Structure probing data (DMS and 2A3) for a 207-nucleotide construct. High DMS reactivity at an A or C suggests that its Watson-Crick edge is free. For 2A3 the reverse transcriptase was SuperScript II with manganese. It was measured as part of the RMDB library OK3TST.
RNA sequence: GGGAACGACUCGAGUAGAGUCGAAAACUCCAGCUCCUGGGUAACCGCCGGAGAUGAGACGCUGACGCUACGCACGGUGCCGUUGAUGUGCUCGGGAUUGCGCUUGCUCAUGGUGAUUCCUCCUAUGGUAUGGCUAGCUCGCAAUAGGCCCGGAGGGGUACAUCAACAAUUUCGAUUGUUGAUGUACAAAAGAAACAACAACAACAAC
Reactivity to DMS in 0.01 (KOAc 150mM, MgCl2 10mM, bicine 150mM(pH8.5), 24C), signal-to-noise 3, nucleotides 027 to 156: c000u000c010c010a110g010c020u000c010c020u010g070g030g030u010a070a070c080c040g040c050c040g000g000a140g010a100u010g010a130g010a060c180g020c060u000g000a100c040g030c020u000a060c060g020c060a110c060g000g030u000g030c040c030g020u000u000g020a140u000g030u000g010c050u000c050g030g010g010a130u010u000g020c050g000c050u000u000g020c020u000c040a090u010g010g010u000g000a170u010u000c040c000u000c040c020u000a130u010g030g030u000a100u010g010g000c020u000a060g020c010u000c070g000c050a050a090u000a100g010g030c010c030c080g000g010a050g020g020g000
Reactivity to 2A3 in 0.01 (KOAc 150mM, MgCl2 10mM, bicine 150mM(pH8.5), 24C), signal-to-noise 6, nucleotides 027 to 156: c020u020c010c000a040g030c020u040c020c030u160g070g000g010u110a110a070c050c030g000c000c020g060g010a030g010a050u120g040a020g010a010c050g000c120u110g030a030c020g010c040u100a030c060g030c060a030c080g040g030u080g040c040c020g040u040u080g050a100u090g070u090g020c030u030c030g040g000g030a050u030u070g020c030g010c060u030u080g010c020u030c070a040u090g030g040u080g060a130u090u080c020c020u040c000c010u100a100u160g060g010u090a070u090g060g000c000u010a020g010c020u040c070g000c020a030a110u060a180g080g000c000c010c000g010g000a040g010g020g040